Notes: This 207-nucleotide RNA was probed chemically with 2A3.
RNA sequence: GGGAACGACUCGAGUAGAGUCGAAAAAGCAACGGUUGAUCUCUCAGCGGCAAGCGAUUCUAUAUCUCUUGCCCUCUGUGAGCUCUUAUUGCCCCCAGGCUGGUUUGAGGUUCUUAUGGACCUCAGAUCACCUAAGGGGCGAUUGCCUGACGGUAGUCCAGCUACAUACGUUCGCGUAUGUAGCUGGAAAAGAAACAACAACAACAAC
Reactivity to 2A3 in 0.01 (KOAc 150mM, MgCl2 10mM, bicine 150mM(pH8.5), 24C), signal-to-noise 1, nucleotides 027 to 156: a000g090c110a080a010c040g020g000u100u070g000a040u010c010u020c000u000c020a040g000c000g010g030c020a000a000g010c030g020a020u260u040c220u300a190u130a010u250c000u000c000u000u020g000c000c000c000u050c000u020g000u000g010a010g020c040u000c000u060u090a070u050u030g000c000c000c000c040c020a000g040g010c210u020g000g020u000u000u000g000a000g000g010u050u030c020u090u230a200u300g000g000a000c000c000u000c000a000g000a000u000c000a000c000c000u010a060a050g000g000g000g000c020g000a000u000u070g040c000c000u090g110a060c080g020g070u070a030g110u020

The data come from the RNA Mapping Database (RMDB), library PDB130. Values cover nucleotides 27 to 156. For 2A3 the reverse transcriptase was SuperScript II with manganese.